[RMDB]
Structure probing data (DMS and 2A3) for a 177-nucleotide construct. The RNA was probed in 150 mM KOAc, 10 mM MgCl2 and 150 mM bicine (pH 8.5) at 24 C.
RNA sequence: GGGAACGACUCGAGUAGAGUCGAAAAGAAAAGGUCGGGCAGAGCGACUGGGUGACCAUCACCCAGGAAGAGGUCAAUCUGUUCGCCGACGCAACGGGUGAUCACCAGUGGAUCCACGUCGACCCGGGUCAUCGAGGGAAUUCGUUCCCUCGAUGACAAAAGAAACAACAACAACAAC
Reactivity to DMS in 0.01 (KOAc 150mM, MgCl2 10mM, bicine 150mM(pH8.5), 24C), signal-to-noise 2, nucleotides 027 to 126: g020a100a190a120a050g000g000u020c030g020g010g020c000a010g000a020g000c210g010a050c010u000g000g020g020u010g000a130c300c300a090u130c000a000c040c000c000a060g050g000a160a100g000a280g020g080u020c070a120a280u010c000u060g000u000u000c020g000c000c000g000a050c230g000c070a120a070c000g000g000g000u000g000a020u040c000a150c080c100a100g060u020g010g010a000u000c020c020a130c080g030u020c040g010a080c020c060c000g090g070
Reactivity to 2A3 in 0.01 (KOAc 150mM, MgCl2 10mM, bicine 150mM(pH8.5), 24C), signal-to-noise 3, nucleotides 027 to 126: g060a000a110a000a010g120g010u120c020g040g000g000c000a000g000a010g020c010g010a020c020u000g000g010g000u000g010a130c080c040a140u280c010a000c010c010c000a000g030g010a070a060g050a010g030g030u150c010a020a080u000c010u000g000u010u020c020g000c000c000g000a010c000g000c060a090a050c020g010g000g040u140g030a020u010c000a030c040c060a040g030u230g260g040a010u050c040c000a080c030g050u050c040g020a030c000c000c000g090g040
Reactivities are given for positions 27 through 126. For DMS the reverse transcriptase was MarathonRT. In probing experiments dimethyl sulfate is read out at A N1 and C N3, which are open when not base-paired.